An RNA of 177 nucleotides, treated with 2A3 and DMS and read out base by base.
The reactions ran in a buffer of 150 mM KOAc, 10 mM MgCl2 and 150 mM bicine (pH 8.5), at 24 C.
Values cover nucleotides 27 to 126.
For DMS, 3,391 sequencing reads were counted.
It was measured as part of the RMDB library OK1LIB.
RNA sequence: GGGAACGACUCGAGUAGAGUCGAAAACUCACGACCAGCUUUCACUGACUGCCAAUGUGUCCAUCGCAAAACUUAGUGAAGUGUGUGAUGAAUGGCGUGACUACGACGUCAUUGCUGUUGACAAUGGAUAUAGGCGUCAGUUCGCUGACGCCUAUAUAAAAGAAACAACAACAACAAC
Reactivity to 2A3 in 0.01 (KOAc 150mM, MgCl2 10mM, bicine 150mM(pH8.5), 24C), signal-to-noise 3, nucleotides 027 to 126: c000u000c060a060c040g080a100c000c030a020g080c020u100u160u080c050a070c050u050g120a030c040u070g080c020c030a080a140u150g060u020g000u020c000c020a020u020c020g040c050a030a110a100a060c030u040u060a080g070u250g300a030a040g010u000g000u010g000u050g090a040u070g020a040a040u070g020g000c000g000u000g000a020c030u060a070c170g190a020c060g020u000c030a030u020u230g040c020u000g030u050u040g040a040c020a070a080u100g030g000
Reactivity to DMS in 0.01 (KOAc 150mM, MgCl2 10mM, bicine 150mM(pH8.5), 24C), signal-to-noise 2, nucleotides 027 to 126: c050u000c010a110c140g000a090c040c080a050g030c010u000u030u040c020a080c000u000g010a120c110u000g010c020c030a130a040u000g040u010g000u040c130c010a030u000c000g010c030a030a060a090a010c040u020u020a070g000u040g020a070a000g040u010g020u000g030u000g020a000u000g000a090a040u010g010g060c000g010u000g030a050c080u020a120c190g000a080c050g010u000c020a020u020u000g010c030u020g000u000u000g000a060c100a030a090u020g000g000